An RNA of 177 nucleotides, treated with DMS and 2A3 and read out base by base.
For DMS the reverse transcriptase was MarathonRT.
Reactivities are rounded to 0.1 and cut off at 0 and 3.
2A3 adducts were read by reverse transcription with SuperScript II with manganese.
It was measured as part of the RMDB library OK2TST.

RNA sequence: GGGAACGACUCGAGUAGAGUCGAAAACACACCGCGCCUAUUAACGAUGAACUGGCCUAUCGUUUAGCAGUGGCUCACGAAGAUAAUCAAAGCUUUCGCGAUCAUGUUAGCAGUGAACGCUGGUUCAUCAGGAAAAUAAUUUCGAUUAUUUUCCUGAAAAAGAAACAACAACAACAAC
Reactivity to DMS in 0.01 (KOAc 150mM, MgCl2 10mM, bicine 150mM(pH8.5), 24C), signal-to-noise 9, nucleotides 027 to 126: c120a130c130a100c040c040g010c090g020c060c040u000a090u010u010a070a100c160g010a050u000g000a020a020c010u000g010g010c010c050u000a120u000c020g010u000u000u010a100g010c020a040g010u000g010g000c200u000c030a030c030g010a040a030g010a060u000a070a120u020c260a090a100a140g000c040u000u010u000c020g020c040g000a030u000c030a020u000g010u010u000a040g000c030a050g010u000g000a040a090c300g000c020u000g010g000u000u000c010a040
Reactivity to 2A3 in 0.01 (KOAc 150mM, MgCl2 10mM, bicine 150mM(pH8.5), 24C), signal-to-noise 9, nucleotides 027 to 126: c060a010c010a020c020c030g060c020g060c020c020u180a160u260u140a210a060c100g030a040u030g010a020a010c010u020g020g000c000c010u130a130u090c020g040u040u070u120a020g000c010a020g030u020g060g010c030u000c010a020c010g010a010a010g020a050u120a150a100u210c110a130a080a030g030c010u060u120u120c010g000c010g010a020u020c000a000u030g040u080u030a020g000c030a020g000u010g060a050a010c040g000c010u010g000g020u000u000c000a020